[RMDB]
RNA sequence: GGGAACGACUCGAGUAGAGUCGAAAACGUCGACGCUUCAUCCGAUAUUUCGAAUUGCCCGACACAAUCGACGAGAGGGGCAAUGGAGCUUAUCUGCCAACGGCGAUCGACUGUGUCACGACGGAACGGUGAUCAUAAUGUUCGCAUUAUGAUCACCAAAAGAAACAACAACAACAAC
Reactivity to 2A3 in 0.01 (KOAc 150mM, MgCl2 10mM, bicine 150mM(pH8.5), 24C), signal-to-noise 9, nucleotides 027 to 126: c030g020u010c010g030a030c020g010c040u090u070c050a100u070c040c030g050a050u020a110u110u100u090c050g080a120a060u040u040g010c010c020c030g120a010c030a000c020a100a160u110c040g100a060c060g020a070g030a050g100g030g000g010c000a010a030u050g020g010a050g010c000u090u080a050u070c030u060g040c040c020a090a050c070g040g000c010g150a230u010c010g030a030c020u030g020u010g030u030c040a040c120g110a010c030g040g070a080a060c100
Reactivity to DMS in 0.01 (KOAc 150mM, MgCl2 10mM, bicine 150mM(pH8.5), 24C), signal-to-noise 4, nucleotides 027 to 126: c080g000u000c010g010a050c090g000c030u000u020c170a120u000c070c110g000a030u000a080u000u000u000c020g000a170a040u010u000g000c020c010c020g000a120c100a170c200a100a120u030c050g000a070c090g000a130g010a160g030g010g010g010c000a010a060u000g040g010a120g010c100u010u000a020u000c040u000g000c090c020a070a130c190g010g000c000g000a090u000c020g000a060c020u030g010u020g000u000c030a160c070g020a080c050g000g000a120a070c200